[RMDB]
RNA sequence: GGGAACGACUCGAGUAGAGUCGAAAAAUAACUACGCUCUAGCAGCUUAGGCUAGCUAGCCAUCUGACACAGGUCUCUCAAAUGGGCGGUGUAUACAGAUGGUCAUCUUACAUUUGAUAGCGAGGGAACUCCGUCCGGGGGUGAACCGCGAAAUAGUACCAGAUUCUAUCUUCGGAUAGAAUCUGGUAAAAGAAACAACAACAACAAC
Reactivity to 2A3 in 0.01 (KOAc 150mM, MgCl2 10mM, bicine 150mM(pH8.5), 24C), signal-to-noise 2, nucleotides 027 to 156: a050u110a040a050c040u130a080c120g030c060u050c000u030a010g010c020a000g010c040u060u080a150g010g090c030u030a100g000c010u010a000g020c030c000a000u000c000u000g050a000c000a000c000a080g000g220u010c000u000c000u010c040a040a040a040u080g000g000g000c020g030g000u020g000u000a120u010a060c010a000g000a010u010g010g060u000c010a090u040c030u150u190a060c030a050u010u030u060g020a010u000a010g010c020g020a300g030g000g000a010a000c000u020c010c020g230u100c090c050g080g010g000g000g000u000g000a000a000c000c000g000c000g000a080a000a000u200a020g110u010